[RMDB]
RNA sequence: GGGAACGACUCGAGUAGAGUCGAAAAUCGAUGGCGUUCGCGCCAUCGAAGAGCCGUACCGCGUAGCACGCGGAUAGGAGUGAAGAUAUCCAAGGCCAUGGUGGAGGCGUGCUUUCGAGCACGCCAAUGAUUGCAGUUCUUUCGAGAACUGCAAUCAAAAAGAAACAACAACAACAAC
Reactivity to 2A3 in 0.01 (KOAc 150mM, MgCl2 10mM, bicine 150mM(pH8.5), 24C), signal-to-noise 1, nucleotides 027 to 126: u000c000g010a000u000g000g040c020g000u020u070c200g000c010g020c070c000a010u000c000g000a000a000g020a030g000c000c020g050u060a030c020c000g080c010g050u050a010g120c090a020c140g050c010g000g000a030u080a010g010g030a070g050u060g100a080a060g010a120u130a030u160c000c010a000a040g110g000c000c030a070u100g120g040u130g040g140a040g000g000c000g000u000g000c020u090u070u040c200g050a000g010c000a000c000g000c000c020a000a000
Reactivity to DMS in 0.01 (KOAc 150mM, MgCl2 10mM, bicine 150mM(pH8.5), 24C), signal-to-noise 2, nucleotides 027 to 126: u000c000g010a000u000g000g010c000g020u000u030c250g010c020g000c000c020a020u000c000g010a030a030g000a230g060c000c010g000u000a280c000c010g020c000g020u000a130g030c100a300c000g000c060g000g000a080u000a040g000g010a050g000u020g020a150a060g010a070u000a070u020c010c030a040a120g000g020c030c060a100u020g000g000u010g040g010a090g000g000c000g000u020g000c000u000u010u000c060g000a020g000c040a000c010g020c000c000a010a010
The record gives the reactivity of an RNA of 177 nucleotides to 2A3 and DMS. The RNA was probed in 150 mM KOAc, 10 mM MgCl2 and 150 mM bicine (pH 8.5) at 24 C. In probing experiments dimethyl sulfate is read out at A N1 and C N3, which are open when not base-paired. For 2A3, 1,162 sequencing reads were counted. The DMS profile rests on 1,279 reads. 2A3 adducts were read by reverse transcription with SuperScript II with manganese. Source: RMDB library M2PK50, as collected in RNAgym. DMS adducts were read by reverse transcription with MarathonRT.